Structure probing data (2A3 and DMS) for a 177-nucleotide construct. It was measured as part of the RMDB libraries RFM100 and RFMREP.

RNA sequence: GGGAACGACUCGAGUAGAGUCGAAAAGGUCUACGUGAUGACGAGUCAGGUCAGGCUCCGCACUGGGUUUGGUCGCCCAGGGGAUGGAGACACGGAAAGGACAUCGUGUGCUAUAAGUCUGACGUAAUGCCUUAGAGAUUUUCGAAUCUCUAAGGCAAAAAGAAACAACAACAACAAC
Reactivity to 2A3 in 0.01 (KOAc 150mM, MgCl2 10mM, bicine 150mM(pH8.5), 24C), signal-to-noise 3, nucleotides 027 to 126: g040g000u040c050u030a030c030g080u070g110a090u100g030a070c020g020a010g060u090c040a000g050g040u030c010a000g000g040c000u000c010c000g050c000a010c030u020g030g000g070u040u000u130g110g040u070c020g020c000c000c000a010g050g010g030g000a050u110g030g020a040g020a030c000a010c000g020g000a150a060a020g140g020a030c000a040u030c030g040u000g040u070g050c020u020a010u060a300a050g030u030c010u020g010a000c010g030u060a060a110
Reactivity to DMS in 0.01 (KOAc 150mM, MgCl2 10mM, bicine 150mM(pH8.5), 24C), signal-to-noise 6, nucleotides 027 to 126: g010g010u000c020u000a040c050g000u010g020a170u030g010a120c060g000a080g010u000c020a110g010g000u000c020a050g000g020c020u000c020c030g020c060a130c000u010g000g000g010u000u010u010g010g000u030c220g000c000c000c010a020g010g000g030g020a120u020g020g010a090g010a170c020a010c030g010g030a060a100a140g020g010a090c130a080u020c030g010u000g000u000g010c040u000a100u030a130a070g000u000c010u000g000a050c020g000u020a080a160